[RMDB]
This 177-nucleotide RNA was probed chemically with DMS and 2A3. For DMS the reverse transcriptase was MarathonRT. For 2A3 the reverse transcriptase was SuperScript II with manganese. Values are in units of 0.01, from 0 to 300, in steps of 10. For 2A3, 3,165 sequencing reads were counted. It was measured as part of the RMDB library RFM100.
RNA sequence: GGGAACGACUCGAGUAGAGUCGAAAAGCGGGAGCCGCCCGGGGACUCCACAGCCCAGGCCUCUCCCAAGCCACCUCCGCUUUCCACAGCUCCUUGCCACCUUCCGUACUUUCCCCAGAGCUGGAAGGCAUACGGCAGUAUUCGUACUGCCGUAUGCAAAAGAAACAACAACAACAAC
Reactivity to DMS in 0.01 (KOAc 150mM, MgCl2 10mM, bicine 150mM(pH8.5), 24C), signal-to-noise 2, nucleotides 027 to 126: g000c140g000g000g020a020g020c110c300g000c020c020c060g030g000g010g020a060c040u000c000c130a020c000a180g000c010c000c000a050g000g010c000c010u000c050u000c010c000c000a050a100g000c050c020a080c040c050u000c040c020g000c050u000u010u010c000c020a090c070a070g000c040u010c010c010u000u060g000c090c000a060c030c020u000u020c070c020g000u000a080c030u020u020u000c000c000c000c150a080g020a080g010c050u020g000g010a070a100g000
Reactivity to 2A3 in 0.01 (KOAc 150mM, MgCl2 10mM, bicine 150mM(pH8.5), 24C), signal-to-noise 2, nucleotides 027 to 126: g060c020g000g000g000a000g010c020c020g000c010c020c000g010g000g010g010a080c040u070c060c050a040c070a050g080c000c000c000a020g000g010c000c010u010c000u000c010c000c010a040a020g030c010c000a030c010c010u010c010c020g010c000u020u060u000c020c020a040c000a050g010c010u000c010c010u040u100g040c010c020a050c010c000u050u000c010c000g020u050a100c050u010u030u060c000c000c000c030a020g030a010g040c080u080g010g040a050a030g050
The RNA was probed in 150 mM KOAc, 10 mM MgCl2 and 150 mM bicine (pH 8.5) at 24 C.